[RMDB]
RNA sequence: GGGAACGACUCGAGUAGAGUCGAAAAUCAACCGAAGGGCGUGGUGGGGGUGAUCUCGCCGUGGAACUACCCCAUGACGCUUACGGUGUCGGACUCGGUGCCCGCGCUGGUGGCCGGUAACGCGGUGGCAUCCCGUAAGUUUCGACUUACGGGAUGCAAAAGAAACAACAACAACAAC
Reactivity to DMS in 0.01 (KOAc 150mM, MgCl2 10mM, bicine 150mM(pH8.5), 24C), signal-to-noise 2, nucleotides 027 to 126: u000c100a150a080c010c000g010a220a190g000g000g010c020g050u000g000g030u000g000g000g040g020g010u020g000a050u000c000u000c060g020c100c230g050u010g010g000a040a070c040u010a300c010c000c000c000a010u010g010a030c000g010c020u010u000a140c050g010g010u000g010u000c080g020g010a080c060u010c050g020g010u000g010c040c010c070g000c080g020c020u020g010g000u020g000g000c010c020g000g010u000a020a070c100g000c020g020g000u020g020
Reactivity to 2A3 in 0.01 (KOAc 150mM, MgCl2 10mM, bicine 150mM(pH8.5), 24C), signal-to-noise 1, nucleotides 027 to 126: u010c000a000a010c010c000g030a140a140g090g010g000c030g010u060g060g020u010g000g070g000g000g000u030g030a050u020c040u020c050g200c100c050g110u190g040g020a030a000c010u220a250c020c000c000c000a030u020g120a010c000g000c000u040u060a010c030g000g030u000g030u070c020g000g050a050c030u030c050g060g030u060g010c000c000c030g050c010g030c020u050g050g050u040g020g010c010c040g010g010u040a050a010c010g020c010g030g070u020g060